[RMDB]
RNA sequence: GGGAACGACUCGAGUAGAGUCGAAAAUUGUAGGUAUAUUCACGAUAGAAAAUGUGUGCUGGAAUUUCACAAUGCUGCUAAGUAUAGCAUCUUGAACAACCUUCAGUGGAGAAAAUGUAGAUGCUCUUGUAUAUACAAUAAGAAAUAUCACUUUCAACGUGGCAAAAUAGUUCGCUAUUUUGCCACGAAAAGAAACAACAACAACAAC
Reactivity to 2A3 in 0.01 (KOAc 150mM, MgCl2 10mM, bicine 150mM(pH8.5), 24C), signal-to-noise 2, nucleotides 027 to 156: u030u030g030u090a060g030g030u020a060u030a050u130u060c030a020c050g040a020u050a090g100a070a140a100a180u090g020u010g000u000g020c040u030g060g050a070a100u050u120u090c000a010c010a040a070u050g000c010u010g000c110u120a010a230g050u190a150u210a170g000c000a030u180c050u170u160g020a060a050c030a030a070c030c000u090u100c060a130g100u100g120g000a050g090a030a050a000a040u150g000u070a020g000a010u030g000c050u020c000u040u020g050u010a040u010a020u040a080c030a050a040u250a140a000g030a010a090a070u130a010u130c060a070c120u190u230u270c040a090a070